[RMDB]
RNA sequence: GGGAACGACUCGAGUAGAGUCGAAAAGGUAUGAUUAGGGUGAGACCUAGGAACCGUAGGGGUAUUCUCAAAGGAAGCUUUUGCAGUGACGCCCAUGUAAGUGGGAUAUAACAACAGAACUCGUAUCUGUGGCACAGAGAGUUCGCUCUCUGUGCAACCUGACUAUUCGUUUCGACGAAUAGUCAGGAAAAGAAACAACAACAACAAC
Reactivity to 2A3 in 0.01 (KOAc 150mM, MgCl2 10mM, bicine 150mM(pH8.5), 24C), signal-to-noise 3, nucleotides 027 to 156: g060g000u080a020u150g020a100u160u070a050g010g010g000u030g030a070g040a030c020c010u000a020g060g050a030a040c030c060g020u080a030g000g020g010g010u000a090u090u020c020u020c000a070a060a010g080g000a070a020g050c010u030u100u110u110g000c060a030g000u000g040a020c050g010c000c010c020a010u080g110u150a100a110g000u030g000g000g010a010u010a020u030a070a030c070a000a020c000a020g060a060a030c080u040c210g050u090a050u010c030u020g010u040g040g000c000a000c000a000g000a000g000a000g010u070u020c100g090c010u000c000u000c000u020g000u000g000c000a000a000
Reactivity to DMS in 0.01 (KOAc 150mM, MgCl2 10mM, bicine 150mM(pH8.5), 24C), signal-to-noise 1, nucleotides 027 to 156: g000g060u000a070u010g030a170u000u000a080g000g040g050u010g010a180g020a060c040c030u010a140g030g010a030a040c050c010g020u010a090g050g000g000g000u000a010u000u000c000u000c040a080a160a070g020g000a030a080g040c010u000u000u000u000g030c000a120g070u030g000a160c000g000c010c000c010a080u010g030u000a030a190g030u000g030g070g030a050u000a070u000a110a140c020a090a040c000a040g020a040a080c050u030c100g010u000a050u010c020u000g000u010g000g000c010a000c020a010g010a060g020a050g040u000u010c300g010c000u000c000u010c000u000g020u000g000c010a010a030

Structure probing data (2A3 and DMS) for a 207-nucleotide construct. The data come from the RNA Mapping Database (RMDB), library M2RFPK. For 2A3, 2,004 sequencing reads were counted. Conditions: 150 mM KOAc, 10 mM MgCl2 and 150 mM bicine (pH 8.5), 24 C. Reactivities are given for positions 27 through 156. For 2A3 the reverse transcriptase was SuperScript II with manganese.